[RMDB]
RNA sequence: GGGAACGACUCGAGUAGAGUCGAAAAACGCGAGGAUUCGUCCUCGCGUACAUAAGUGAGUUCGCCGGAUAGCUGCCUAAGAGAGUUCGCCGGAUAGCUGCCAAGCACAUAGUUUCGACUAUGUGAACCCUAUGUGGUCUUUCGAGACCACAUAGGGAAAAGAAACAACAACAACAAC
Reactivity to 2A3 in 0.01 (KOAc 150mM, MgCl2 10mM, bicine 150mM(pH8.5), 24C), signal-to-noise 1, nucleotides 027 to 126: a000c000g020c010g000a010g000g010a010u030u060c110g070u010c050c000u010c000g000c000g000u010a000c010a070u300a070a020g090u030g190a030g010u030u040c010g050c000c000g020g000a020u060a050g030c040u130g080c060c030u210a170a020g140a000g010a040g080u040u020c010g000c040c000g000g020a110u060a020g000c010u040g080c020c020a060a010g020c000a010c000a000u000a000g000u000u110u070c140g000a010c000u010a020u020g000u010g020a060a070
Reactivity to DMS in 0.01 (KOAc 150mM, MgCl2 10mM, bicine 150mM(pH8.5), 24C), signal-to-noise 1, nucleotides 027 to 126: a000c000g000c020g010a000g030g000a060u000u020c220g000u000c000c000u000c000g010c000g000u000a000c120a110u030a100a070g020u000g010a090g010u010u000c110g020c050c010g020g010a070u000a050g000c020u000g000c070c080u010a090a080g000a120g000a070g000u010u000c060g030c080c010g000g010a090u000a090g000c000u000g020c040c080a090a080g030c000a010c000a020u000a000g000u010u020u000c190g000a060c000u000a020u020g000u000g000a070a120